[RMDB]
RNA sequence: GGGAACGACUCGAGUAGAGUCGAAAAGGGAUGGCUGUGUACGGCCCCCGCACGAUGGUCACGCUAGCCAUUGACGGCGUGCCGGGGGCUCAUGAGUUCACUCUGAGAGACGACCUGAGCGGGCAGCAGUGUUAGCGGGAUUCGUCCCGCUAACACUAAAAGAAACAACAACAACAAC
Reactivity to DMS in 0.01 (KOAc 150mM, MgCl2 10mM, bicine 150mM(pH8.5), 24C), signal-to-noise 1, nucleotides 027 to 126: g000g030g010a100u000g010g050c020u000g010u000g030u010a130c300g010g000c010c030c010c010c020g050c010a000c010g010a050u010g030g000u000c030a010c240g010c050u020a100g000c140c060a120u010u000g000a010c030g010g000c010g010u020g000c080c060g070g000g000g010g080c000u000c010a000u020g010a040g030u010u000c060a060c040u000c050u000g020a170g020a160g040a120c030g000a090c090c000u020g010a050g040c030g040g020g000c080a150g010c120